[RMDB]
RNA sequence: GGGAACGACUCGAGUAGAGUCGAAAACUGUUUUAAAUGCCACAAGUCGAAGUGAAAGCAUGUGUGUUAACAAGUAUUUAAAAUGCACUCCUCUCAGGAAGGAUUGUGAGCUACCCUUCCUUAACAGAUUUCUUCCAAUUGCCUUCUUCCUGGCAUAGACUAGCUACCCUUUCGAGGGUAGCUAGUCAAAAGAAACAACAACAACAAC
Reactivity to 2A3 in 0.01 (KOAc 150mM, MgCl2 10mM, bicine 150mM(pH8.5), 24C), signal-to-noise 1, nucleotides 027 to 156: c000u000g050u040u000u000u090a150a130a010u020g030c030c020a050c050a070a030g050u070c020g030a020a000g010u050g110a070a020a020g080c140a130u040g050u000g020u000g000u090u100a070a070c040a220a000g040u040a040u050u240u040a110a130a030a020u050g000c020a040c030u050c000c000u120c000u080c070a000g010g000a000a000g050g000a070u100u060g050u090g070a050g050c020u140a160c000c000c000u010u060c000c000u030u050a050a000c020a050g050a010u060u020u050c040u050u080c100c020a050a060u100u100g000c000c000u040u040c000u030u030c000c000u040g000g060c000a000u050a080